[RMDB]
RNA sequence: GGGAACGACUCGAGUAGAGUCGAAAACAAACAACAUGCCAAGCAAUAGGGAAGAAGAGAAAGUGACGGUACCUGCAGAAGAAGCGCCGGCUAACAACGUAACAGCAGACGCCGCAAGGCAUGAAAACCAUACCAGCUAGUUCGCUAGCUGGUAUGGAAAAGAAACAACAACAACAAC
Reactivity to DMS in 0.01 (KOAc 150mM, MgCl2 10mM, bicine 150mM(pH8.5), 24C), signal-to-noise 3, nucleotides 027 to 126: c030a110a130a060c160a090a140c040a010u000g000c030c000a050a300g010c040a050a020u010a060g020g000g000a160a080g000a090a070g030a090g000a040a060a060g050u020g020a180c110g000g000u000a080c030c020u000g000c040a060g020a140a070g010a110a140g000c000g000c010c030g000g000c030u020a050a070c160a080a070c220g020u020a020a050c100a020g000c010a020g000a140c120g010c010c070g000c040a010a250g000g010c030a030u000g000a060a050a070a050
Reactivity to 2A3 in 0.01 (KOAc 150mM, MgCl2 10mM, bicine 150mM(pH8.5), 24C), signal-to-noise 6, nucleotides 027 to 126: c010a020a080a010c060a020a010c010a020u030g020c010c000a030a040g020c010a060a150u110a220g050g060g050a060a080g050a080a030g050a060g070a060a150a020g080u070g060a030c010g010g010u020a070c010c010u040g000c060a040g030a220a010g040a060a020g050c010g010c030c030g030g000c030u050a070a040c040a030a010c080g080u150a050a000c010a030g050c000a000g020a040c030g010c050c000g000c030a030a020g000g000c000a000u010g020a020a020a000a000
Annotation: Source: RMDB library OK1LIB, as collected in RNAgym. Chemical mapping of a 177-nucleotide RNA with DMS and 2A3. For 2A3 the reverse transcriptase was SuperScript II with manganese. For DMS, 4,419 sequencing reads were counted. Reactivities are given for positions 27 through 126. Conditions: 150 mM KOAc, 10 mM MgCl2 and 150 mM bicine (pH 8.5), 24 C.